[RMDB]
RNA sequence: GGGAACGACUCGAGUAGAGUCGAAAAUGUGUAUGUAUGUGGUCCGGGCAGGCACACAGAUACAAAAUAAAUACGCAGCACUCGGUUUUCAUAACUGAAUUGCAUGCCCGAUUGAAUGACGAAUGGAAAUCGAUCCCUAGUUCGCUAGGGAUCGAUUAAAAGAAACAACAACAACAAC
Reactivity to DMS in 0.01 (KOAc 150mM, MgCl2 10mM, bicine 150mM(pH8.5), 24C), signal-to-noise 2, nucleotides 027 to 126: u020g040u000g010u000a000u020g020u010a020u050g000u000g000g000u000c040c040g050g000g020c110a080g000g000c040a070c040a040c060a030g000a140u000a030c150a050a130a060a090u030a000a060a140u010a140c120g000c000a040g010c120a070c170u020c030g020g000u000u000u000u000c080a070u020a040a010c000u000g000a030a040u020u000g060c020a060u000g000c020c010c000g070a180u000u040g000a170a070u030g000a080c130g000a200a160u020g060g030a060
Reactivity to 2A3 in 0.01 (KOAc 150mM, MgCl2 10mM, bicine 150mM(pH8.5), 24C), signal-to-noise 2, nucleotides 027 to 126: u140g080u030g010u090a010u100g140u000a010u050g050u030g000g040u000c030c060g000g110g000c010a060g000g020c050a000c000a000c000a040g040a030u170a100c050a090a150a000a000u270a070a140a070u180a010c110g000c030a000g060c000a050c050u000c000g020g110u000u000u130u170c290a210u300a080a080c010u000g190a140a040u100u030g100c070a040u030g000c020c000c000g150a110u060u180g000a130a220u250g010a010c120g060a080a050u110g010g080a040

Structure probing data (DMS and 2A3) for a 177-nucleotide construct. The reactions ran in a buffer of 150 mM KOAc, 10 mM MgCl2 and 150 mM bicine (pH 8.5), at 24 C. High DMS reactivity at an A or C suggests that its Watson-Crick edge is free. It was measured as part of the RMDB library OK1LIB.